[RMDB]
RNA sequence: GGGAACGACUCGAGUAGAGUCGAAAAGAUAUGGAACAAUCAUUACCGGACUUUGAUCUCGGAAACGAGGGAGUCCGAAUGAGUUGUUCCUAAGUCAAACAAACACAAGGUUCGCCUUGUGUUUGAAGCAUUACAAUUCGUUCGCGAAUUGUAAUGCAAAAGAAACAACAACAACAAC
Reactivity to DMS in 0.01 (KOAc 150mM, MgCl2 10mM, bicine 150mM(pH8.5), 24C), signal-to-noise 3, nucleotides 027 to 126: g010a050u000a300u000g000g010a040a020c010a000a010u000c000a020u010u010a070c300c010g000g020a010c000u000u000u010g030a050u010c000u000c000g010g000a100a080a190c000g010a030g010g000g010a000g010u000c000c000g010a030a000u010g010a070g020u000u010g000u000u000c000c000u000a040a060g020u010c050a070a110a300c010a000a000a010c010a020c000a010a000g010g000u010u010c250g020c000c010u000u000g000u000g000u020u000u000g000a040a100
Reactivity to 2A3 in 0.01 (KOAc 150mM, MgCl2 10mM, bicine 150mM(pH8.5), 24C), signal-to-noise 2, nucleotides 027 to 126: g030a010u110a060u170g010g010a020a000c000a000a020u030c000a030u020u070a230c150c000g000g000a010c030u270u280u160g130a130u100c010u000c010g000g060a140a080a010c010g000a000g030g030g010a010g000u000c000c000g030a000a000u010g010a030g250u060u010g010u000u040c000c000u010a060a020g030u010c030a110a060a080c020a010a000a000c010a020c000a000a000g030g050u070u110c230g250c050c000u000u000g000u000g000u000u010u010g000a020a010

An RNA of 177 nucleotides, treated with DMS and 2A3 and read out base by base. The DMS profile rests on 2,193 reads. The reactions ran in a buffer of 150 mM KOAc, 10 mM MgCl2 and 150 mM bicine (pH 8.5), at 24 C. DMS adducts were read by reverse transcription with MarathonRT. It was measured as part of the RMDB library TTRDEL.